[RMDB]
RNA sequence: GGGAACGACUCGAGUAGAGUCGAAAAAGUUUUGCCUGUUAGGUGAGGCUCCUAUGCAAACACAGGCCACUGCCCAAAAAUGUCCCAAGACGCCAAUGGGUAGAACAGGGAUUGUCGGAUUAAGGCUAAAACAGCCCAUGCUUCGGCAUGGGCUGAACUUAUCUCAAUUCUUCGGAAUUGAGAUAAGAAAAGAAACAACAACAACAAC
Reactivity to 2A3 in 0.01 (KOAc 150mM, MgCl2 10mM, bicine 150mM(pH8.5), 24C), signal-to-noise 2, nucleotides 027 to 156: a000g040u070u060u090u060g010c000c000u010g090u100u110a060g030g030u050g060a070g020g050c030u060c020c010u130a090u230g010c030a020a070a030c050a010c010a070g020g000c020c010a030c010u010g000c000c000c000a060a000a000a000a010u030g000u030c050c050c000a070a060g040a020c010g010c010c020a030a060u060g010g010g020u030a030g020a020a010c010a040g010g030g040a040u020u050g130u130c040g000g040a010u120u240a070a040g040g000c010u030a040a030a030a040c010a000g020c020c000c000a000u000g000c010u080u080c250g050g020c000a010u050g030g000g000c020u000g000a000a010
Reactivity to DMS in 0.01 (KOAc 150mM, MgCl2 10mM, bicine 150mM(pH8.5), 24C), signal-to-noise 1, nucleotides 027 to 156: a050g010u000u000u000u000g010c000c020u010g000u000u010a030g010g030u000g010a040g020g040c010u010c050c050u000a030u010g000c070a130a100a090c040a050c000a080g050g010c030c050a110c050u000g020c000c000c000a010a060a050a070a120u010g010u000c010c000c050a080a110g010a050c060g030c060c020a030a160u000g000g000g030u000a050g000a150a080c070a070g000g010g030a040u000u000g020u000c050g000g000a120u010u010a060a090g010g020c020u000a040a030a070a140c000a020g070c000c000c000a010u000g010c000u000u000c300g070g000c000a020u000g000g000g030c000u000g010a000a050